[RMDB]
RNA sequence: GGGAACGACUCGAGUAGAGUCGAAAAUUACGGGACCACGGACGCUGCUCCUGUGAGGACGGCGAGGAGAGUAACGGACACGGACAAAAAGUGAAAGAAAGCUUCGGGGACGCCUGAAGUAAGGUAAGAGAGACACCUACUGGGGAAGUAGGGAAUAGCAUAAUUAGGGAUUCGUCCCUAAUUAUGCAAAAGAAACAACAACAACAAC
Reactivity to 2A3 in 0.01 (KOAc 150mM, MgCl2 10mM, bicine 150mM(pH8.5), 24C), signal-to-noise 3, nucleotides 027 to 156: u130u070a050c040g020g000g030a010c000c040a020c050g070g000a020c030g000c070u050g030c040u030c000c000u080g070u080g070a120g000g050a020c040g010g010c010g000a000g050g010a010g010a010g000u050a080a000c020g020g020a020c030a020c050g030g010a020c120a020a100a020a030a010g060u090g060a080a070a040g060a020a120a010g020c000u020u050c030g000g000g000g050a060c090g060c060c010u020g000a030a010g040u100a050a000g070g020u080a120a000g040a000g000a000g010a060c000a030c070c000u030a050c040u050g040g000g030g050a070a010g000u030a020g000g000g040a030a110u090a040
Reactivity to DMS in 0.01 (KOAc 150mM, MgCl2 10mM, bicine 150mM(pH8.5), 24C), signal-to-noise 1, nucleotides 027 to 156: u000u000a060c070g030g030g010a110c010c060a030c030g010g030a110c100g000c060u000g010c020u000c000c020u000g000u040g020a140g000g010a080c020g000g000c040g000a080g040g030a020g000a110g050u000a080a080c140g020g000a090c000a100c000g010g000a100c050a020a040a080a050a160g000u000g040a090a110a170g000a050a080a240g020c010u000u000c000g000g000g000g000a070c260g000c000c000u000g020a040a050g020u000a040a030g000g020u010a090a080g010a070g020a150g000a090c040a050c000c010u020a030c030u010g020g010g010g010a120a070g010u000a010g020g000g020a050a100u000a170